[RMDB]
RNA sequence: GGGAACGACUCGAGUAGAGUCGAAAAAGUGCCCUCAGGUAAUGUGGUGGUUGCGAUCCCGUCAGCACCGCAGGUUCAAGAGGCACGAGAAAACCUCCUUGCGUGUGUUCGCACACGCAAGGAGGAACCUCUUUGCUAAGUUCGCUUAGCAAAGAGGAAAAGAAACAACAACAACAAC
Reactivity to DMS in 0.01 (KOAc 150mM, MgCl2 10mM, bicine 150mM(pH8.5), 24C), signal-to-noise 1, nucleotides 027 to 126: a150g000u000g000c060c010c030u010c040a120g000g000u020a110a060u020g000u000g010g010u010g020g000u000u000g010c160g000a110u000c070c090c020g000u000c030a040g000c000a000c010c030g000c000a000g000g020u000u000c030a040a100g000a050g010g000c030a020c030g010a180g000a100a070a110a110c020c000u000c010c000u000u000g020c000g030u000g010u000g000u000u010c250g020c000a030c010a000c010g000c000a000a000g000g010a000g000g000a000a020
Reactivity to 2A3 in 0.01 (KOAc 150mM, MgCl2 10mM, bicine 150mM(pH8.5), 24C), signal-to-noise 2, nucleotides 027 to 126: a010g010u000g010c030c050c000u000c010a020g050g100u130a070a000u030g000u010g010g020u030g020g190u180u010g020c030g030a200u140c120c050c000g080u100c010a000g000c000a000c030c010g020c000a010g080g060u200u060c030a050a020g000a030g010g010c010a010c020g050a100g040a020a090a030a050c000c000u020c010c020u000u000g000c000g000u030g000u030g040u040u070c180g020c140a010c010a020c000g030c000a000a000g000g000a000g000g000a000a010
Record summary
Source: RMDB library RFMREP, as collected in RNAgym. Chemical mapping of a 177-nucleotide RNA with DMS and 2A3. The RNA was probed in 150 mM KOAc, 10 mM MgCl2 and 150 mM bicine (pH 8.5) at 24 C.